[RMDB]
RNA sequence: GGGAACGACUCGAGUAGAGUCGAAAAUUGAAUAGUGAUUGAGCUUCGAAACGUUAACUUCAGUCGGUCGACGUCUUAACUGGUGCGGAAGACAAUAUCAUGUAAUGCGAUAUGGCGAGUGUUAUGUACAGAUAGUAGUGUUCGCACUACUAUCUGUAAAAGAAACAACAACAACAAC
Reactivity to 2A3 in 0.01 (KOAc 150mM, MgCl2 10mM, bicine 150mM(pH8.5), 24C), signal-to-noise 4, nucleotides 027 to 126: u080u050g040a040a060u040a090g050u040g070a070u050u070g040a020g010c000u030u040c020g060a080a100a050c010g050u060u040a020a040c020u060u030c070a060g030u060c010g070g000u060c070g030a060c020g010u030c010u070u080a070a040c050u040g000g060u150g070c060g070g020a030a020g010a020c020a030a020u040a040u090c040a030u070g080u190a140a020u100g060c000g030a010u030a030u120g100g010c050g000a050g040u030g040u070u060a090u100g060u010
Reactivity to DMS in 0.01 (KOAc 150mM, MgCl2 10mM, bicine 150mM(pH8.5), 24C), signal-to-noise 4, nucleotides 027 to 126: u010u010g000a090a080u000a110g020u000g000a110u000u000g010a140g010c050u000u000c050g010a060a090a070c080g000u000u010a040a030c070u000u000c060a090g010u000c060g010g010u010c060g010a060c050g000u000c060u000u000a070a070c080u010g010g010u000g020c080g000g010a040a050g000a050c070a050a050u000a060u000c040a030u000g010u000a070a060u010g010c040g010a040u000a060u000g010g000c070g010a060g020u000g020u000u010a080u000g010u000